[RMDB]
RNA sequence: GGGAACGACUCGAGUAGAGUCGAAAAAGCUCCGUACGCGGAGCAGGUGUAAACAUGAUGUUCUUUUUCCUCCUAUUCAGGCUCGCACCUAAAAGUUAGGGCGGGCCUGCUUUUUUUGAACAAUAAACAUAGCGGCAUAGUUCGCUAUGCCGCUAUGAAAAGAAACAACAACAACAAC
Reactivity to 2A3 in 0.01 (KOAc 150mM, MgCl2 10mM, bicine 150mM(pH8.5), 24C), signal-to-noise 3, nucleotides 027 to 126: a010g000c000u000c000c000g000u070a020c300g000c020g140g000a000g020c000a010g030g050u100g070u080a120a160a010c060a100u150g000a070u070g100u020u010c020u110u100u010u000u000c040c030u000c030c000u030a070u100u100c010a000g010g030c000u000c000g000c030a300c090c020u090a140a140a000a090g170u160u060a000g000g000g000c000g020g000g020c000c000u000g000c000u000u020u000u010u000u020u050g010a020a020c000a080a030u090a110a030a030
Reactivity to DMS in 0.01 (KOAc 150mM, MgCl2 10mM, bicine 150mM(pH8.5), 24C), signal-to-noise 1, nucleotides 027 to 126: a030g050c000u000c000c000g070u070a050c210g060c000g000g060a000g030c020a000g000g010u020g060u080a100a100a180c130a080u040g020a160u000g000u010u000c000u000u000u040u080u000c230c060u000c010c040u020a150u030u020c010a000g000g030c000u000c000g000c000a090c010c000u000a030a040a160a080g070u090u010a000g040g020g000c060g000g040g020c010c000u000g020c010u000u000u000u000u000u000u000g000a060a040c030a050a010u010a050a000a090

This 177-nucleotide RNA was probed chemically with 2A3 and DMS. DMS adducts were read by reverse transcription with MarathonRT. The 2A3 profile rests on 1,241 reads. The data come from the RNA Mapping Database (RMDB), library RFM100. Reactivities are given for positions 27 through 126. Conditions: 150 mM KOAc, 10 mM MgCl2 and 150 mM bicine (pH 8.5), 24 C.